[RMDB]
RNA sequence: GGGAACGACUCGAGUAGAGUCGAAAAGAUAUGGAUGCGGGUAUGGAGCCUCAGUCGGAAACGACUGUUACAAAGGGCUAUGAAGUAUUGCAUCCUAAGUCAAAAGGAAAAGGUUCGCCUUUUCCAACUGGUAUCAUCUGUUCGCAGAUGAUACCAGAAAAGAAACAACAACAACAAC
Reactivity to DMS in 0.01 (KOAc 150mM, MgCl2 10mM, bicine 150mM(pH8.5), 24C), signal-to-noise 2, nucleotides 027 to 126: g010a050u000a160u000g020g010a000u000g000c000g000g030g020u030a020u000g010g020a100g030c000c020u010c020a000g000u020c000g020g010a080a070a090c010g010a070c000u010g000u030u020a150c270a080a100a180g030g040g010c000u000a220u000g000a040a240g030u020a040u000u000g000c020a010u010c010c000u010a020a080g020u030c050a090a100a170a200g000g000a010a000a000a030g010g030u000u010c300g010c000c000u000u000u000u000c000c000a090a040
Reactivity to 2A3 in 0.01 (KOAc 150mM, MgCl2 10mM, bicine 150mM(pH8.5), 24C), signal-to-noise 1, nucleotides 027 to 126: g010a020u000a010u050g000g000a000u000g020c050g060g170g060u080a040u060g070g140a000g020c000c010u060c010a000g000u000c000g070g030a010a010a010c000g000a020c000u010g060u090u080a110c120a020a240a050g150g030g000c030u110a300u300g050a050a010g010u010a000u020u130g000c010a000u000c000c000u000a050a000g040u000c020a000a030a060a280g010g000a000a010a000a010g010g000u100u170c300g170c000c000u000u000u000u000c000c000a000a020